[RMDB]
RNA sequence: GGGAACGACUCGAGUAGAGUCGAAAAGAGAUGAUGUAUAAUAAGAGUAACACGCGUCAGGCACCAUACCCAACUUAUGCAUCCUCUCGAUGUUAUUAAUAUCGUCUCCGGAGCAGGGUUUCCCCUGGCAGGGGUCGGUGUUCGCACCGACCCCUGCAAAAGAAACAACAACAACAAC
Reactivity to 2A3 in 0.01 (KOAc 150mM, MgCl2 10mM, bicine 150mM(pH8.5), 24C), signal-to-noise 1, nucleotides 027 to 126: g010a000g000a010u020g000a010u000g150u000a020u010a160a120u260a120a050g050a010g190u150a110a000c050a000c120g060c100g060u060c070a020g090g050c000a000c030c060a120u220a050c000c000c000a000a000c090u060u000a020u050g020c000a000u010c000c070u070c000u000c050g060a060u060g000u050u100a220u080u000a000a170u000a000u200c060g020u000c000u000c000c010g030g000a000g120c050a040g000g050g220u010u060u010c000c000c000c000u000g060